Structure probing data (DMS and 2A3) for a 177-nucleotide construct. The reactions ran in a buffer of 150 mM KOAc, 10 mM MgCl2 and 150 mM bicine (pH 8.5), at 24 C. The 2A3 profile rests on 6,965 reads. 2A3 adducts were read by reverse transcription with SuperScript II with manganese.
RNA sequence: GGGAACGACUCGAGUAGAGUCGAAAAUCAUGGUGGUUCGCCACCAUGAACUGUCUAGUCGCUAGAAAACGAUCAAAACUAGCCACUAGACUAACGAUCGAACUGGGGGACAGUUCGCUGUCCCCAACCAGUCCUAUCUAUUCGUAGAUAGGACUGGAAAAGAAACAACAACAACAAC
Reactivity to DMS in 0.01 (KOAc 150mM, MgCl2 10mM, bicine 150mM(pH8.5), 24C), signal-to-noise 5, nucleotides 027 to 126: u000c000a000u000g010g010u000g000g010u000u010c260g010c000c000a000c000c000a010u000g000a010a150c120u010g000u000c000u000a000g020u000c300g010c000u000a000g000a100a050a070a170c110g010a090u000c100a090a060a110a150c000u000a000g010c000c090a030c010u010a010g010a010c000u000a040a060c210g000a080u000c060g000a090a080c220u010g010g020g000g000g000a050c000a000g000u000u020c170g020c030u000g000u000c000c010c000c010a000a030
Reactivity to 2A3 in 0.01 (KOAc 150mM, MgCl2 10mM, bicine 150mM(pH8.5), 24C), signal-to-noise 4, nucleotides 027 to 126: u030c000a000u010g000g000u010g000g030u020u040c190g070c060c000a000c000c000a000u000g010a000a020c020u010g000u000c000u010a000g000u000c010g010c010u020a010g050a100a180a050a060c140g120a170u180c120a030a040a030a190c010u000a000g010c000c000a000c000u000a010g020a000c000u000a040a020c020g070a090u210c090g070a100a100c140u250g120g000g000g000g000a000c000a000g010u030u040c140g020c040u010g000u000c000c000c000c000a000a000